An RNA of 207 nucleotides, treated with DMS and 2A3 and read out base by base. For 2A3, 3,265 sequencing reads were counted. DMS (dimethyl sulfate) methylates the pairing face of unpaired adenines and cytosines.
RNA sequence: GGGAACGACUCGAGUAGAGUCGAAAAGGAUCUGAGUACUUAUAAGUGCGAAGUGAGUGAGGGUCUUACGAGCACAAAUUACAACCCUCUAUUAAGUAUCGAAGAUCGGCCGGAGAUCGAGAUACGACUAUUAACCGGCGACUGUACGAAGAUCCGAAUGCUAUAUCAGGUUCGCCUGAUAUAGCAUAAAAGAAACAACAACAACAAC
Reactivity to DMS in 0.01 (KOAc 150mM, MgCl2 10mM, bicine 150mM(pH8.5), 24C), signal-to-noise 3, nucleotides 027 to 156: g010g040a040u000c030u010g010a300g040u000a030c010u010u020a100u000a060a180g060u000g000c010g000a110a220g000u030g000a080g020u010g010a060g000g010g010u010c000u000u000a090c080g000a300g040c040a050c010a020a080a110u020u000a060c140a040a050c000c010c000u000c000u010a170u000u010a040a100g040u000a010u000c010g010a170a220g010a010u000c020g040g020c060c050g020g060a160g010a020u000c030g020a300g010a090u000a030c010g010a110c100u030a150u010u020a150a050c020c030g000g030c020g000a090c160u010g010u000a040c050g010a180a040g000a160u020c010c020g000a050
Reactivity to 2A3 in 0.01 (KOAc 150mM, MgCl2 10mM, bicine 150mM(pH8.5), 24C), signal-to-noise 5, nucleotides 027 to 156: g010g000a010u000c000u010g000a010g030u010a000c010u030u150a090u110a300a100g010u040g010c010g030a090a020g010u010g000a000g010u080g010a000g000g000g010u080c000u000u000a010c010g000a020g020c030a030c030a070a170a130u190u120a080c040a040a040c010c010c000u000c010u020a150u100u180a110a020g000u000a000u010c010g010a060a000g010a020u000c020g020g010c000c000g000g010a070g000a010u010c010g000a000g000a110u010a000c010g010a000c000u070a100u300u030a100a040c000c000g010g000c010g030a040c100u080g000u000a000c000g000a000a010g000a010u000c000c010g000a000